Conditions: 150 mM KOAc, 10 mM MgCl2 and 150 mM bicine (pH 8.5), 24 C. Structure probing data (2A3 and DMS) for a 177-nucleotide construct.
RNA sequence: GGGAACGACUCGAGUAGAGUCGAAAACACUACCUGACUCAGGAAUCGGCUCUCGAAGGUGAAGCGAGAGGAACCAGACCUCAUCAGCCCAACAUCAAAGACACCAUCGGAACAGCAGCGCCCGCAGCAGGAGCACAUAUUUCGAUAUGUGCUCCUGAAAAGAAACAACAACAACAAC
Reactivity to 2A3 in 0.01 (KOAc 150mM, MgCl2 10mM, bicine 150mM(pH8.5), 24C), signal-to-noise 2, nucleotides 027 to 126: c060a020c060u150a090c020c000u100g160a230c040u040c200a030g000g000a060a070u120c020g060g000c000u050c000u000c030g050a120a050g110g050u170g050a070a000g040c040g040a020g020a020g050g000a000a030c010c000a030g050a130c020c000u000c020a210u000c020a010g000c000c040c030a010a020c030a030u170c060a110a060a080g050a030c030a010c030c010a030u070c050g030g040a060a070c000a040g000c000a030g030c010g040c010c000c060g120c010a010g030
Reactivity to DMS in 0.01 (KOAc 150mM, MgCl2 10mM, bicine 150mM(pH8.5), 24C), signal-to-noise 2, nucleotides 027 to 126: c120a100c110u000a110c050c020u000g010a090c090u010c050a100g000g000a090a090u000c120g020g040c010u000c000u000c020g010a170a100g020g050u000g000a110a080g000c030g010a050g010a090g000g000a090a100c050c060a080g000a100c040c000u010c050a060u000c020a100g000c010c000c010a040a080c070a100u000c080a050a040a110g000a100c050a040c020c040a050u000c030g000g040a110a070c060a080g010c030a070g010c050g010c020c000c030g010c210a100g000

Reactivities are given for positions 27 through 126.